[RMDB]
RNA sequence: GGGAACGACUCGAGUAGAGUCGAAAAGAGAGGCUGAGUGGGGAGAAUUACUUGAGCCUAGGAGUUCAAGACCAGCAUGGGGAACACUGAGACCCCGUCUCUACAAAAACAUCAAACAAUUAGUCGUGCAUGGGAGUUGCAUGUGCCUGUGGUCCCAUCACCAGUAAUUAUUCGUAAUUACUGGUGAAAAAGAAACAACAACAACAAC
Reactivity to 2A3 in 0.01 (KOAc 150mM, MgCl2 10mM, bicine 150mM(pH8.5), 24C), signal-to-noise 5, nucleotides 027 to 156: g040a000g010a020g000g030c050u060g020a010g040u090g010g020g060g010a040g040a050a070u170u070a060c020u020u030g010a010g000c020c050u080a150g050g090a200g020u020u030c030a020a020g020a080c030c030a010g050c020a090u100g000g000g010g010a060a040c060a030c110u090g050a050g030a140c010c040c010c030g000u010c000u000c010u060a060c040a020a090a020a050a010c040a080u170c080a070a060a120c030a040a130u120u060a050g050u060c030g010u010g040c040a050u080g050g020g000a110g050u070u050g020c050a030u060g040u050g040c000c000u030g000u040g030g030u020c000c010c000a010
Reactivity to DMS in 0.01 (KOAc 150mM, MgCl2 10mM, bicine 150mM(pH8.5), 24C), signal-to-noise 3, nucleotides 027 to 156: g030a110g000a050g020g030c030u000g000a110g030u000g020g020g000g020a090g020a120a090u000u010a070c010u000u000g010a040g030c020c030u000a130g050g020a110g020u000u000c030a030a080g010a100c070c020a110g010c060a120u010g000g030g010g000a100a090c050a060c070u000g010a130g000a160c010c020c010c010g010u000c010u000c020u010a190c050a050a050a060a040a090c070a140u010c050a090a070a090c070a030a060u000u000a090g020u000c030g040u010g020c050a060u010g020g010g010a120g010u000u000g020c020a070u010g010u020g010c030c030u000g000u000g010g030u000c000c000c010a300